This 207-nucleotide RNA was probed chemically with DMS and 2A3. Values cover nucleotides 27 to 156. For DMS the reverse transcriptase was MarathonRT.

RNA sequence: GGGAACGACUCGAGUAGAGUCGAAAAUUUGCAUGACAACAUUGAAUAUCGGAUACAAACAGCACCUACUAGAAGCGCUCUAUAAUUCGCAGGCUGACAGAACAUGCCUUUUGGAAGACUGAACUCGGCAAUGAUGAAAAUGAAUUAUGGGUGUCAGCCUUAACUGUGGUUUCGACCACAGUUAAGGAAAAGAAACAACAACAACAAC
Reactivity to DMS in 0.01 (KOAc 150mM, MgCl2 10mM, bicine 150mM(pH8.5), 24C), signal-to-noise 1, nucleotides 027 to 156: u000u000u000g030c000a080u010g010a230c010a060a050c040a150u010u020g000a080a280u010a080u020c080g010g000a170u000a120c040a060a050a140c010a110g050c010a050c050c050u000a050c080u010a050g000a000a140g010c020g030c040u000c020u010a040u010a050a060u010u000c040g010c010a040g000g010c010u000g040a100c040a050g010a040a050c060a110u020g020c020c000u000u020u020u030g000g050a050a110g000a090c000u000g050a050a180c000u000c050g020g010c040a050a060u010g030a130u000g010a070a040a050a120u010g010a080a050u000u000a000u010g020g070g030u000g010u000c040a150g000
Reactivity to 2A3 in 0.01 (KOAc 150mM, MgCl2 10mM, bicine 150mM(pH8.5), 24C), signal-to-noise 3, nucleotides 027 to 156: u110u070u090g050c050a020u110g080a070c070a110a040c050a070u070u140g040a110a030u110a070u130c080g020g060a010u030a090c040a050a130a030c040a040g030c040a040c020c010u070a100c030u040a030g050a130a020g020c060g030c030u020c000u050a140u020a060a120u120u040c060g000c040a020g120g000c010u010g010a050c010a020g120a070a010c010a090u240g000c000c000u100u140u060u130g040g010a040a000g040a040c040u080g020a090a020c030u010c050g010g010c010a090a110u110g080a070u060g000a070a100a050a040u120g010a030a010u050u010a020u060g000g060g000u060g040u040c050a010g030